[RMDB]
RNA sequence: GGGAACGACUCGAGUAGAGUCGAAAAGCAGUCGCGGCCCGUUGUUAACGGCCCCGCUGCCGCAGAGUUCGCCGUUGCGUUGCGCAACCGGGUGAGCACCGACGCGAUGAUGGCGCACCUAUCGAAAAACGGUAUAAGUGUUCGCACUUAUACCGUUAAAAGAAACAACAACAACAAC
Reactivity to 2A3 in 0.01 (KOAc 150mM, MgCl2 10mM, bicine 150mM(pH8.5), 24C), signal-to-noise 9, nucleotides 027 to 126: g010c010a010g090u250c050g030c060g020g010c050c170c040g020u020u090g220u090u170a100a040c030g020g000c000c000c010c000g000c020u010g000c000c000g010c050a040g050a010g060u030u050c020g010c030c020g080u120u110g040c040g050u070u100g060c030g000c060a070a070c030c020g030g000g030u070g050a050g030c020a020c020c010g060a050c020g020c020g020a030u070g010a010u070g020g000c010g000c010a020c000c010u130a130u260c090g040a080a050a000
Reactivity to DMS in 0.01 (KOAc 150mM, MgCl2 10mM, bicine 150mM(pH8.5), 24C), signal-to-noise 8, nucleotides 027 to 126: g000c020a030g010u020c070g040c290g000g010c230c020c070g020u000u010g000u030u050a080a060c100g000g000c050c020c050c120g000c020u000g010c000c030g020c110a070g000a100g010u000u000c030g000c020c040g000u010u010g000c060g020u000u020g010c060g000c050a080a090c110c060g000g000g010u010g000a140g010c050a110c070c020g000a080c040g000c020g010a050u010g000a100u030g000g000c010g010c070a070c020c020u010a080u020c060g010a070a080a080